Conditions: 150 mM KOAc, 10 mM MgCl2 and 150 mM bicine (pH 8.5), 24 C. An RNA of 177 nucleotides, treated with DMS and read out base by base. High DMS reactivity at an A or C suggests that its Watson-Crick edge is free. The data come from the RNA Mapping Database (RMDB), library TTRINS.
[RMDB]
RNA sequence: GGGAACGACUCGAGUAGAGUCGAAAAGAUAUGGAUGUCAGAGGGAGCUGUGAACUACACAUCGUAUAUAUUCGGAAACGAAUAUAUACGAUGUGUAGUUCCAGCGAGGAUCUCUACAUCCUAAGUCGAUUAUACAUCAGUUCGCUGAUGUAUAAUCAAAAGAAACAACAACAACAAC
Reactivity to DMS in 0.01 (KOAc 150mM, MgCl2 10mM, bicine 150mM(pH8.5), 24C), signal-to-noise 4, nucleotides 027 to 126: g010a100u010a300u000g000g010a010u010g000u000c290a020g010a020g000g010g010a050g030c000u000g000u020g010a000a000c000u000a010c000a000c000a000u000c000g010u000a000u000a010u000a000u000u000c010g000g000a140a110a240c000g000a010a000u000a000u000a000u000a000c000g000a000u000g010u010g000u000a000g000u000u000c000c000a000g000c000g010a040g010g000a030u000c000u000c000u000a020c010a000u000c000c000u000a030a100g010u010c100